[RMDB]
Structure probing data (DMS) for a 177-nucleotide construct.
RNA sequence: GGGAACGACUCGAGUAGAGUCGAAAAAAAGUCUACGAAAGAACAAAGAAGCAAUCAAACCGAGUAGUGAAAUGAUGGCUUCAGUCCAAAAUGGGCAAACACUACAGACGGAGCCAAAGGCAAUUAAUCCCUAACCAAUGUUCGCAUUGGUUAGGGAAAAAGAAACAACAACAACAAC
Reactivity to DMS in 0.01 (KOAc 150mM, MgCl2 10mM, bicine 150mM(pH8.5), 24C), signal-to-noise 1, nucleotides 027 to 126: a010a070a070g000u000c020u040a050c060g000a120a020a040g000a070a230c110a020a050a050g000a000a040g010c020a080a070u000c110a000a090a110c060c060g010a070g050u040a050g040u010g000a080a040a080u020g010a020u000g070g030c000u000u000c000a080g060u000c000c010a080a030a010a130u000g000g000g010c140a110a080a170c070a000c000u000a020c040a040g000a050c060g000g000a100g050c030c050a000a040a100g020g000c080a020a060u000u000a060a090
It was measured as part of the RMDB library M2PK90.